[RMDB]
RNA sequence: GGGAACGACUCGAGUAGAGUCGAAAAGAUAUGGAUACAGGACAUGCGUACGGAUCGGAAACGAUCCGCUACGCAACAGCCUGAUCCUAAGUCAAAACAUCAUGUGUGCUUCGGCACACAUGAUGAAGCACUUGUAUCUGUUCGCAGAUACAAGUGCAAAAGAAACAACAACAACAAC
Reactivity to DMS in 0.01 (KOAc 150mM, MgCl2 10mM, bicine 150mM(pH8.5), 24C), signal-to-noise 2, nucleotides 027 to 126: g000a070u000a300u000g000g010a000u000a090c000a000g000g000a030c070a220u000g000c000g000u000a010c000g000g000a020u000c000g000g000a080a070a140c000g000a010u000c000c000g000c140u000a000c000g000c000a010a020c150a120g010c000c000u010g000a040u010c000c000u010a040a110g010u000c010a090a090a180a130c010a010u000c000a030u010g000u000g000u000g000c010u000u000c240g070g000c000a010c000a000c020a000u000g000a000u010g020a050a060
Reactivity to 2A3 in 0.01 (KOAc 150mM, MgCl2 10mM, bicine 150mM(pH8.5), 24C), signal-to-noise 2, nucleotides 027 to 126: g030a020u080a020u180g000g020a040u300a300c000a000g030g030a010c070a170u080g000c000g010u000a000c000g030g020a000u010c000g050g000a010a120a050c000g000a000u000c000c000g000c020u000a000c000g000c000a000a000c000a010g020c010c010u010g000a000u000c000c000u020a190a000g070u050c060a010a010a090a180c010a010u020c000a060u000g000u000g000u000g000c010u050u090c300g170g000c000a020c000a010c000a010u010g010a010u010g010a000a010